[RMDB]
RNA sequence: GGGAACGACUCGAGUAGAGUCGAAAACAGUUGGGUUCGCCCAACUGAAAAAAACCUUUGUGUCGCCAGCUUUCUUGGAUUUAACGAUCCCAUUGGGAUCGUUUGUCAGAAAUUUGGGCGACACUCUGGUAAAAAGGAGUUCCUUCGGGAACUCCAAGCCAUCUAUAGUCUUCGGACUAUAGAUGGCAAAAGAAACAACAACAACAAC
Reactivity to 2A3 in 0.01 (KOAc 150mM, MgCl2 10mM, bicine 150mM(pH8.5), 24C), signal-to-noise 2, nucleotides 027 to 156: c010a010g010u000u000g070g000g010u030u080c200g090c000c000c010a000a020c020u000g050a100a020a000a000a000a000a010c020c000u020u010u000g010u000g000u000c000g020c010c010a030g020c110u050u010u040c020u070u260g130g010a030u220u190u220a000a000c000g020a010u000c070c000c200a300u170u300g000g000g000a010u000c000g000u000u000u010g010u000c000a020g010a010a040a030u090u120u100g180g070g010c020g020a000c000a000c000u020c000u000g000g050u120a090a090a090a060a060g020g000a000g000u000u020c010c020u020u050c220g050g000g000a000a000c000u010c000c000a000a000